[RMDB]
Overview:
An RNA of 207 nucleotides, treated with 2A3 and DMS and read out base by base. The reactions ran in a buffer of 150 mM KOAc, 10 mM MgCl2 and 150 mM bicine (pH 8.5), at 24 C. For 2A3, 3,412 sequencing reads were counted. Source: RMDB library OK3TST, as collected in RNAgym. For 2A3 the reverse transcriptase was SuperScript II with manganese.
RNA sequence: GGGAACGACUCGAGUAGAGUCGAAAAUAUGCCGCUGGAUAUGCAAAGUCCAUCGCUGAGCAGAAGGCAGCAGACGAACAAGAGGAGCAACGACGCAAUGCAGAACUGCAAAAGAUUCAGGCAGACGCACAGCAAAGGAUUGAUGCUGCGCGUAAUGCGCAUAGCCCUUAUUCGUAAGGGCUAUGCGAAAAGAAACAACAACAACAAC
Reactivity to 2A3 in 0.01 (KOAc 150mM, MgCl2 10mM, bicine 150mM(pH8.5), 24C), signal-to-noise 5, nucleotides 027 to 156: u170a040u050g020c030c020g020c040u040g020g010a050u040a020u180g100c070a130a080a040g010u050c030c010a030u050c050g000c070u070g010a030g010c020a020g040a090a030g060g000c010a000g010c010a010g040a090c070g020a070a020c020a080a030g030a040g060g020a010g040c030a060a020c070g110a010c040g020c060a010a070u130g040c000a010g030a140a020c070u060g000c010a000a010a120a060g040a030u090u100c030a040g070g000c020a010g020a060c010g010c000a010c000a010g030c020a010a050a080g130g040a060u050u150g030a040u070g000c000u000g000c010g000c000g020u040a090a110u170g010
Reactivity to DMS in 0.01 (KOAc 150mM, MgCl2 10mM, bicine 150mM(pH8.5), 24C), signal-to-noise 1, nucleotides 027 to 156: u000a110u000g070c000c020g000c060u020g000g010a120u000a050u010g040c030a090a110a130g020u000c000c030a020u000c120g060c020u000g020a230g040c000a110g020a110a080g010g000c000a020g000c020a110g050a110c030g000a060a050c040a060a090g000a020g040g000a160g020c000a090a040c030g000a100c080g020c040a030a160u010g000c090a040g000a070a060c070u000g000c050a030a030a070a200g010a210u000u000c010a120g010g000c020a080g020a150c010g000c010a070c000a000g020c000a050a070a080g030g000a140u000u000g020a240u020g000c040u000g010c000g000c020g020u010a050a160u010g020